[RMDB]
RNA sequence: GGGAACGACUCGAGUAGAGUCGAAAAGUCAUGCCGAGAGGCAUGACAGGUAGCGAGAGCUACCGAAGAGUCAUGCGCCCUACCCAACGCAUGACUCGAGAGUAUAUGUGGUGUAUGCCGACCUACAUUAUAUAUACGAACGGUCGGAUGGUAGGGAGAUAUGGCAGUAUUUCGAUACUGCCAUAUCAAAAGAAACAACAACAACAAC
Reactivity to DMS in 0.01 (KOAc 150mM, MgCl2 10mM, bicine 150mM(pH8.5), 24C), signal-to-noise 2, nucleotides 027 to 156: g030u000c000a000u010g010c020c000g010a300g000a300g060g030c000a000u010g010a010c020a020g000g020u000a000g020c020g020a300g030a300g000c000u000a000c000c000g020a060a080g000a010g000u000c000a010u000g000c010g020c000c020c030u010a040c060c000c020a110a030c000g000c000a020u000g030a010c010u000c010g000a110g000a250g050u000a040u000a030u000g030u000g000g010u000g000u000a020u000g000c020c220g000a110c100c000u000a050c000a030u000u000a060u000a080u000a050u000a070c040g000a130a140c210g000g020u000c030g030g000a020u020g030g050u010a020g000g030g000a210
Reactivity to 2A3 in 0.01 (KOAc 150mM, MgCl2 10mM, bicine 150mM(pH8.5), 24C), signal-to-noise 3, nucleotides 027 to 156: g000u000c000a000u010g000c000c000g080a070g000a030g090g000c000a000u000g010a000c000a000g000g000u000a000g000c000g000a080g010a010g050c000u000a000c000c000g010a110a020g000a000g010u000c010a000u010g000c000g030c000c010c000u030a030c020c010c000a100a030c020g000c020a000u020g000a000c000u000c000g060a100g000a020g060u110a010u020a050u150g100u050g020g070u020g060u020a040u200g070c030c030g040a050c000c000u020a020c080a030u100u090a060u050a020u000a000u020a130c110g080a200a010c040g060g070u050c050g030g020a020u020g000g000u010a020g000g000g000a090